[RMDB]
Annotation: The data come from the RNA Mapping Database (RMDB), library M2PK90. The record gives the reactivity of an RNA of 177 nucleotides to DMS. DMS adducts were read by reverse transcription with MarathonRT. Conditions: 150 mM KOAc, 10 mM MgCl2 and 150 mM bicine (pH 8.5), 24 C.
RNA sequence: GGGAACGACUCGAGUAGAGUCGAAAAAACACGUGGGUACCGCCCAGUGGGGGGGAGAGGGACACGCCCUGGGCUCUGCCCAGGGUGCAGCCGGACUGACUGAGCCCCUGUGCCGCCCCCAGAUAAACUUUUCUCAAAAUUUCGAUUUUGAGAAAAGAAAAGAAACAACAACAACAAC
Reactivity to DMS in 0.01 (KOAc 150mM, MgCl2 10mM, bicine 150mM(pH8.5), 24C), signal-to-noise 1, nucleotides 027 to 126: a080a060c090a030c070g020u000g000g010g010u020a100c110c090g000c040c000c020a010g000u020g060g000g030g030g030g020g000a130g000a080g010g010g030a020c000a300c080g000c000c000c000u020g000g000g040c010u040c240u010g030c000c010c010a020g000g000g060u000g040c020a010g010c030c000g010g000a180c140u000g000a050c030u010g000a220g020c010c000c010c030u000g010u000g010c010c010g000c010c010c000c010c080a030g000a090u010a060a080a240